Annotation: The record gives the reactivity of an RNA of 207 nucleotides to 2A3 and DMS. It was measured as part of the RMDB library ARCHII. For 2A3 the reverse transcriptase was SuperScript II with manganese. In probing experiments dimethyl sulfate is read out at A N1 and C N3, which are open when not base-paired.
[RMDB]
RNA sequence: GGGAACGACUCGAGUAGAGUCGAAAAGGUUUCGACUUCGCGCAUCGAAUCAAGGGAAGCGUGCCGGUGCAGGCAAGAGACCACCGUAAGCGUCGAUGCAACUAGAUAAGCGCCGAUUCACAUCAGCGCGACUACGCUCUCGCUGCCUAAGCGACGGGAGUUGAUCUUUGUUCGCAAAGAUCAACUCAAAAGAAACAACAACAACAAC
Reactivity to 2A3 in 0.01 (KOAc 150mM, MgCl2 10mM, bicine 150mM(pH8.5), 24C), signal-to-noise 4, nucleotides 027 to 156: g100g020u010u010u070c030g020a030c030u060u040c060g020c000g000c020a050u030c070g060a110a100u170c130a140a120g140g020g010a030a030g000c030g000u040g080c060c000g000g010u060g030c040a030g030g000c010a030a000g040a010g020a030c010c020a010c060c020g080u070a030a040g020c020g020u000c010g010a010u050g000c010a010a030c060u070a050g100a180u110a110a050g020c020g050c050c020g050a040u100u160c140a060c020a130u020c040a020g000c000g000c010g050a020c020u070a020c050g030c010u000c000u000c020g020c020u030g000c030c030u100a120a050g010c030g040a030c040g050g020
Reactivity to DMS in 0.01 (KOAc 150mM, MgCl2 10mM, bicine 150mM(pH8.5), 24C), signal-to-noise 1, nucleotides 027 to 156: g020g020u000u000u000c020g000a160c100u000u000c080g000c050g030c120a190u000c050g030a010a040u000c180a240a110g000g000g060a050a040g000c030g010u000g030c110c000g010g000u010g020c080a130g000g010c030a030a180g000a140g000a200c080c000a110c090c000g010u000a040a090g010c070g040u040c030g050a070u010g000c000a130a040c080u000a030g060a130u000a060a230g000c010g000c030c030g010a200u030u000c230a120c040a300u000c000a040g030c050g040c030g000a090c050u000a060c050g030c050u000c010u010c040g040c070u000g010c000c090u030a130a150g000c020g010a020c000g000g000